Description: Chemical mapping of a 177-nucleotide RNA with DMS and 2A3. DMS adducts were read by reverse transcription with MarathonRT. Source: RMDB library OK1LIB, as collected in RNAgym.
[RMDB]
RNA sequence: GGGAACGACUCGAGUAGAGUCGAAAAGAUCUCUUCGGCUUGAGAGCGAUACGCGCUCCGUGGUGCUCAUAAUUAUUCGCGUUACGCACUACCGUGUAACAUCCCGGCUCGAGAGGAAUCUGGUCGCUCUCUGUGGAGGUUUCGACCUUCACGGGGGAAAAGAAACAACAACAACAAC
Reactivity to DMS in 0.01 (KOAc 150mM, MgCl2 10mM, bicine 150mM(pH8.5), 24C), signal-to-noise 1, nucleotides 027 to 126: g000a040u000c030u000c010u000u000c110g000g000c040u000u010g010a070g010a050g030c070g000a300u030a080c120g090c140g000c300u000c270c210g000u010g060g010u020g000c100u030c180a110u000a050a040u050u030a120u020u080c220g040c300g000u000u000a100c170g030c000a030c080u000a040c010c000g000u000g000u000a030a070c020a300u000c010c000c000g020g000c030u000c060g010a000g000a000g000g030a000a060u010c020u010g000g000u000c060g000c020
Reactivity to 2A3 in 0.01 (KOAc 150mM, MgCl2 10mM, bicine 150mM(pH8.5), 24C), signal-to-noise 1, nucleotides 027 to 126: g000a040u020c000u000c000u080u030c000g020g000c030u090u090g030a010g010a020g190c060g020a060u100a240c130g020c010g020c070u000c050c050g020u050g000g000u070g000c000u030c140a070u110a210a100u160u200a080u130u160c060g000c010g050u050u050a030c040g010c000a030c060u030a080c040c090g000u090g030u030a110a060c030a160u040c030c000c000g010g010c030u030c070g050a050g000a010g030g030a000a020u020c020u030g040g000u030c000g000c000